[RMDB]
RNA sequence: GGGAACGACUCGAGUAGAGUCGAAAACAACGGCACCGAAUACGGUCUCGCAUCCUCGGUGUGGACCAAGGACGUCGACACCGCCGCACGCAUGGGAGCACGGCUGGACUUCGGGUGUGUGUGGAUCGCCACCAGGUGGUUUCGACCACCUGGUGGCAAAAGAAACAACAACAACAAC
Reactivity to 2A3 in 0.01 (KOAc 150mM, MgCl2 10mM, bicine 150mM(pH8.5), 24C), signal-to-noise 1, nucleotides 027 to 126: c060a060a000c020g100g030c000a030c020c000g050a000a050u160a070c000g000g030u020c020u040c070g000c020a200u020c010c020u020c070g000g000u080g000u000g110g020a040c050c050a110a240g180g050a010c090g020u030c010g040a040c000a000c040c010g000c010c010g000c000a050c060g060c040a000u120g010g000g010a030g000c040a030c150g030g010c030u060g010g140a120c020u030u020c060g230g030g010u010g000u000g000u010g010u010g000g040a090u060c120